Chemical mapping of a 207-nucleotide RNA with 2A3. For 2A3 the reverse transcriptase was SuperScript II with manganese.
[RMDB]
RNA sequence: GGGAACGACUCGAGUAGAGUCGAAAAAUCACCGGUGGGGAACCCCAUACGGCAACGGCGUAGAAGUAAAUGCUAACCAAUCCGUGGUAUCUACGCGACGGAGCAUCCACGGAUAACACUAACAAGGCUAAGCGUCUCGGUUUCGACCGAGACGCAAUCAUAGACCACGAUUCGUCGUGGUCUAUGAAAAAGAAACAACAACAACAAC
Reactivity to 2A3 in 0.01 (KOAc 150mM, MgCl2 10mM, bicine 150mM(pH8.5), 24C), signal-to-noise 1, nucleotides 027 to 156: a000u040c020a010c020c000g000g010u000g000g000g030g120a210a110c070c000c000c000a080u130a170c030g010g000c020a090a020c020g010g000c000g090u100a010g000a030a010g000u080a010a050a010u060g040c050u090a090a030c060c000a060a110u020c000c000g000u000g000g010u060a050u000c050u000a040c050g030c010g000a070c140g100g020a010g050c010a010u020c000c000a000c000g000g010a010u010a000a040c130a000c030u030a300a000c070a130a010g110g030c090u190a180a000g030c000g000u000c010u020c030g030g040u010u090u160c180g060a060c000c000g000a000g000a000c000g000c000a010a000